[RMDB]
RNA sequence: GGGAACGACUCGAGUAGAGUCGAAAAGGGGUUAGCGUUUGCAAAACGCUGUUAAUGCAAUGAUCUGGAUUUAGCGCAAGUAGGUCCGAAAUCCAGAUCAACAUUUCGGACCUCCGCGCUAAUAAAAGCAUAAUAAUUCGUUCGCGAAUUAUUAUGCAAAAGAAACAACAACAACAAC
Reactivity to DMS in 0.01 (KOAc 150mM, MgCl2 10mM, bicine 150mM(pH8.5), 24C), signal-to-noise 8, nucleotides 027 to 126: g010g010g010g010u010u010a030g020c010g020u000u000u000g030c280a090a070a040a010c010g010c010u000g010u000u000a070a080u000g010c110a070a060u000g000a090u010c040u000g010g010a230u000u000u000a010g010c020g010c010a080a120g030u010a020g010g000u000c010c010g000a010a010a010u000c120c110a140g000a080u010c140a050a080c150a030u000u000u000c010g000g010a020c010c000u000c090c140g000c010g010c000u000a000a000u000a040a070a100a120
Reactivity to 2A3 in 0.01 (KOAc 150mM, MgCl2 10mM, bicine 150mM(pH8.5), 24C), signal-to-noise 4, nucleotides 027 to 126: g020g010g010g020u040u060a010g010c010g010u040u040u200g080c050a130a100a000a010c010g000c020u010g040u070u130a130a060u130g050c080a050a100u140g050a110u070c040u090g080g040a060u040u030u030a010g000c010g000c000a070a090g030u110a010g100g020u010c000c000g000a000a000a000u060c090c030a020g040a090u050c000a000a000c000a000u010u010u010c000g000g000a000c010c000u000c020c030g020c010g000c000u020a020a000u040a040a060a000a010